[RMDB]
RNA sequence: GGGAACGACUCGAGUAGAGUCGAAAACGAUUGGCGGUAGAGGAAAGUCCAGGCUCGCCCAAGCUGAGAUGCUUGGAGUGUUCGUACCUGGCGCAAGCCAGGGCAAGUGAGGCGCAAGCCUCGCUGAGACCAUGGACAUGUUCGCAUGUCCAUGGUCAAAAGAAACAACAACAACAAC
Reactivity to DMS in 0.01 (KOAc 150mM, MgCl2 10mM, bicine 150mM(pH8.5), 24C), signal-to-noise 1, nucleotides 027 to 126: c150g010a150u000u010g010g010c040g010g010u010a150g000a140g000g000a010a120a090g000u030c010c000a050g030g010c030u000c030g010c070c010c020a020a000g020c010u000g000a110g000a040u000g000c010u000u010g000g020a180g020u010g010u000u000c070g020u010a060c010c000u000g030g000c050g020c140a070a090g010c020c000a010g000g000g020c100a070a040g000u000g000a010g000g000c010g040c300a080a130g010c000c000u000c000g000c000u000g010a210